[RMDB]
RNA sequence: GGGAACGACUCGAGUAGAGUCGAAAAACGAUUGAACCGCACUUAGUUCUGAUUGGUUGAUACAGCUGAGCCCUGAUUGGUUGAGGCAGGUGAGCCCUAUAAGACCCAACACUCAACAGAGGUGUGGGUUUGGGGAGAACGCAGAGUCCAUGUGUGACGAUACGCAGCUAUUCGUAGCUGCGUAUCGAAAAGAAACAACAACAACAAC
Reactivity to 2A3 in 0.01 (KOAc 150mM, MgCl2 10mM, bicine 150mM(pH8.5), 24C), signal-to-noise 1, nucleotides 027 to 156: a000c070g030a040u030u060g030a030a020c050c010g090c020a040c030u090u050a080g050u090u000c020u030g090a260u060u000g080g120u030u060g050a070u050a120c020a000g000c030u000g020a010g010c000c000c000u010g060a090u010u120g030g060u080u070g030a010g010g010c040a000g000g040u010g020a070g010c000c020c000u170a240u000a150a050g040a000c000c000c020a050a130c030a000c000u030c000a040a290c070a250g140a040g020g060u060g000u010g040g000g000u080u000u000g000g020g000g000a040g030a040a020c030g000c010a000g010a020g070u010c020c050a080u060g020u010g030u040g130a010
Reactivity to DMS in 0.01 (KOAc 150mM, MgCl2 10mM, bicine 150mM(pH8.5), 24C), signal-to-noise 1, nucleotides 027 to 156: a060c030g050a100u020u000g020a010a130c000c000g000c050a050c090u000u000a060g000u010u000c000u000g000a030u010u010g060g010u000u010g010a170u000a060c020a080g050c000u010g010a300g000c030c000c030u020g010a190u020u000g000g000u000u010g010a180g000g000c000a140g020g000u020g000a140g000c020c000c050u010a060u000a090a100g010a010c000c000c000a010a080c000a020c010u010c010a170a140c220a220g010a140g030g000u000g000u010g000g020g050u000u000u000g030g020g000g000a040g000a060a040c020g010c020a040g010a190g020u000c000c030a100u010g020u000g010u000g020a140
An RNA of 207 nucleotides, treated with 2A3 and DMS and read out base by base. Source: RMDB library OK3TST, as collected in RNAgym. For DMS the reverse transcriptase was MarathonRT. As a SHAPE reagent, 2A3 marks flexible, mostly unpaired nucleotides at the ribose 2'-OH. 2A3 adducts were read by reverse transcription with SuperScript II with manganese. For 2A3, 596 sequencing reads were counted. Conditions: 150 mM KOAc, 10 mM MgCl2 and 150 mM bicine (pH 8.5), 24 C.